[RMDB]
RNA sequence: GGGAACGACUCGAGUAGAGUCGAAAACAACCUUCGGGUUGGAUGAUGAUAUGGAACUAGAUGCCGAUGAAACUAUUACUAUUCUAUUCGGAAACGAAUAGAACGAAUAAUAGUGGAGGCAAUUAGUUCCUAAGUCUAGGGCUUGGUUCGCCAAGAAUUCGACAUUGAAGUUCGCUUCAAUGUCGAAAAAAGAAACAACAACAACAAC
Reactivity to DMS in 0.01 (KOAc 150mM, MgCl2 10mM, bicine 150mM(pH8.5), 24C), signal-to-noise 1, nucleotides 027 to 156: c000a000a070c000c000u000u010c230g050g020g010u010u000g000g020a090u010g020a210u000g000a020u000a070u000g020g000a020a030c010u000a130g000a200u010g010c000c000g050a130u000g010a250a280a010c010u000a010u000u000a030c110u000a050u000u000c010u000a010u000u000c020g030g000a050a010a030c000g000a010a010u000a020g010a040a000c000g010a000a000u010a000a020u000a030g000u000g030g020a050g030g050c000a000a030u010u000a010g050u000u000c020c000u000a000a150g010u000c010u000a210g030g000g000c040u010u010g010g030u000u000c120g000c060c050a010a130g000a150a300
Reactivity to 2A3 in 0.01 (KOAc 150mM, MgCl2 10mM, bicine 150mM(pH8.5), 24C), signal-to-noise 2, nucleotides 027 to 156: c010a000a010c000c000u030u070c260g140g000g020u080u020g060g010a160u130g050a050u070g000a000u010a010u030g010g000a010a000c010u000a020g030a300u050g000c020c000g220a280u010g000a010a000a000c000u000a000u000u010a030c140u010a010u000u010c010u000a000u010u000c000g020g000a000a000a000c000g000a010a000u000a000g010a000a000c000g020a300a300u000a000a000u000a000g010u000g010g010a010g000g000c010a000a000u020u010a000g000u000u000c010c000u010a000a000g000u010c010u050a100g080g070g040c010u010u020g040g000u050u060c070g020c060c010a040a000g120a040a100